[RMDB]
RNA sequence: GGGAACGACUCGAGUAGAGUCGAAAAGUAUGGAUGCCACCGUGACGGCUCAAUCACACAAGUGCCAACGAUAACGAGGCGCUCGCUAUUGCUGCGUAACUGACGGCCUGACGGUCUUACGUUACAAAAAACGAAAAGUGGUUCGCCACUUUUCGAAGGAAAGUGUACGGUUCGCCGUACACUUUCCAAAAGAAACAACAACAACAAC
Reactivity to 2A3 in 0.01 (KOAc 150mM, MgCl2 10mM, bicine 150mM(pH8.5), 24C), signal-to-noise 2, nucleotides 027 to 156: g050u070a080u120g030g040a020u070g060c050c040a040c020c010g030u060g050a060c060g030g020c020u030c090a030a130u090c020a080c020a030c060a140a050g030u040g050c030c010a000a090c080g100a140u060a130a030c100g020a080g090g020c140g060c040u070c070g020c080u080a080u120u280g080c090u100g000c050g030u000a020a000c020u000g020a020c030g010g020c000c000u130g070a050c090g000g030u010c000u010u060a010c010g040u010u010a020c000a000a120a000a000a000a000c010g010a000a000a000a000g000u000g060g000u060u030c100g020c030c020a020c000u000u000u000u000c000g040a030a000
Structure probing data (2A3) for a 207-nucleotide construct. The RNA was probed in 150 mM KOAc, 10 mM MgCl2 and 150 mM bicine (pH 8.5) at 24 C. The 2A3 profile rests on 1,035 reads. As a SHAPE reagent, 2A3 marks flexible, mostly unpaired nucleotides at the ribose 2'-OH.